[RMDB]
RNA sequence: GGGAACGACUCGAGUAGAGUCGAAAACAAAGCCUUUCAAAUCAGGUAAACCAGGAUGUGCACCUACUGCAACAUUAUGUGCUUUGGCAAGUUUUACCGUUUCAUUCAUUACAUUUUCAUCACCAGCAACACGAAAGGUGUUCGCACCUUUCGUGUUAAAAGAAACAACAACAACAAC
Reactivity to 2A3 in 0.01 (KOAc 150mM, MgCl2 10mM, bicine 150mM(pH8.5), 24C), signal-to-noise 2, nucleotides 027 to 126: c020a020a060a020g010c000c000u090u190u160c090a040a110a140u080c030a030g070g000u040a040a000a040c040c020a010g090g000a080u060g050u030g000c010a010c040c050u100a070c030u090g010c050a080a030c000a130u080u060a100u160g070u020g060c000u040u060u040g040g010c000a070a150g030u000u020u110u090a060c010c010g000u030u060u120c020a050u060u040c000a030u060u140a090c030a060u070u050u000u110c060a100u060c000a040c080c030a000g040c020
Reactivity to DMS in 0.01 (KOAc 150mM, MgCl2 10mM, bicine 150mM(pH8.5), 24C), signal-to-noise 2, nucleotides 027 to 126: c040a100a050a160g000c030c010u010u000u010c100a030a110a120u000c110a090g010g010u000a010a040a060c050c020a060g000g000a090u000g010u000g000c040a100c080c090u000a070c110u010g000c020a050a060c090a060u000u000a070u020g020u010g020c040u020u000u000g010g020c060a050a100g000u000u020u000u000a090c040c020g000u000u010u000c060a050u000u000c060a050u000u000a080c050a060u000u010u020u000c010a050u000c090a070c020c020a100g010c150